[RMDB]
RNA sequence: GGGAACGACUCGAGUAGAGUCGAAAAGAUAUGGACAGAACUACAGCCUAAGAGGCUAUGAAGUCGGAAACGAUGGAGCCUCGAUGGCUGCUGUCCUAAGUCAAAGAUACCUCUUCGGAGGUAUCAACUGAAAAAUUGAGUUCGCUCAAUUUUUCAGAAAAGAAACAACAACAACAAC
Reactivity to 2A3 in 0.01 (KOAc 150mM, MgCl2 10mM, bicine 150mM(pH8.5), 24C), signal-to-noise 2, nucleotides 027 to 126: g020a020u050a060u130g010g010a000c020a010g030a120a000c090u210a080c290a010g030c010c000u080a160a010g000a000g010g030c030u070a300u220g030a020a020g040u020c010g020g010a050a070a020c010g000a010u030g000g080a020g000c000c010u000c000g000a000u050g010g010c000u000g000c000u010g010u020c010c000u000a130a000g020u000c030a050a000a180g010a000u000a000c000c020u020c010u030u110c300g140g000a000g000g010u010a010u010c000a010a010
Reactivity to DMS in 0.01 (KOAc 150mM, MgCl2 10mM, bicine 150mM(pH8.5), 24C), signal-to-noise 3, nucleotides 027 to 126: g000a040u000a300u000g000g000a000c000a020g000a060a040c070u020a300c010a040g010c010c010u000a230a300g000a020g000g000c000u000a080u000g000a090a290g000u000c000g010g000a140a050a240c020g000a010u000g010g020a010g030c000c000u000c010g000a170u000g000g020c000u000g000c000u000g010u000c000c000u010a040a100g000u000c020a060a070a130g010a020u000a010c000c000u000c000u000u020c190g000g020a010g010g000u000a000u000c000a060a120
The data come from the RNA Mapping Database (RMDB), library TTRDEL. An RNA of 177 nucleotides, treated with 2A3 and DMS and read out base by base. For 2A3, 3,020 sequencing reads were counted. For 2A3 the reverse transcriptase was SuperScript II with manganese. The reactions ran in a buffer of 150 mM KOAc, 10 mM MgCl2 and 150 mM bicine (pH 8.5), at 24 C.